[RMDB]
This 177-nucleotide RNA was probed chemically with 2A3 and DMS. Conditions: 150 mM KOAc, 10 mM MgCl2 and 150 mM bicine (pH 8.5), 24 C. Reactivities are given for positions 27 through 126. It was measured as part of the RMDB library M2PK50. The 2A3 profile rests on 1,417 reads. 2A3 adducts were read by reverse transcription with SuperScript II with manganese.
RNA sequence: GGGAACGACUCGAGUAGAGUCGAAAAGCGUCCUCGUUCGCGAGGACGCAAAAUAGCCAUUUGGAUCGAUGGCUUUACGAUCCGAAAAGUACAAAAGUACAAAAACCCCACUCUUCGGAGUGGGGAAGUUUAAAAUUAGCUUCGGCUAAUUUUAAACAAAAGAAACAACAACAACAAC
Reactivity to 2A3 in 0.01 (KOAc 150mM, MgCl2 10mM, bicine 150mM(pH8.5), 24C), signal-to-noise 2, nucleotides 027 to 126: g000c000g000u000c010c000u010c010g060u050u050c190g010c030g120a020g040g020a010c040g000c000a000a000a020a000u040a000g040c000c000a140u040u060u150g060g020a020u030c030g030a070u110g130g000c000u030u010u040a010c030g000a010u000c000c010g000a010a080a030a020g000u000a010c030a040a300a090a070g040u020a020c030a010a170a090a190a190c020c010c020c000a010c010u000c010u040u080c210g100g000a020g010u010g010g010g000g000a000a000
Reactivity to DMS in 0.01 (KOAc 150mM, MgCl2 10mM, bicine 150mM(pH8.5), 24C), signal-to-noise 2, nucleotides 027 to 126: g020c020g010u000c000c000u000c000g060u000u000c260g020c020g010a020g020g020a000c000g030c000a010a010a050a070u000a160g000c010c000a110u000u010u000g010g000a010u000c030g010a140u010g000g010c080u000u000u000a110c070g000a030u000c000c000g000a010a060a110a080g000u010a020c010a100a060a080a240g010u000a020c040a090a070a090a110a160c010c000c000c000a000c000u000c000u000u020c210g010g000a010g020u000g000g000g000g000a000a000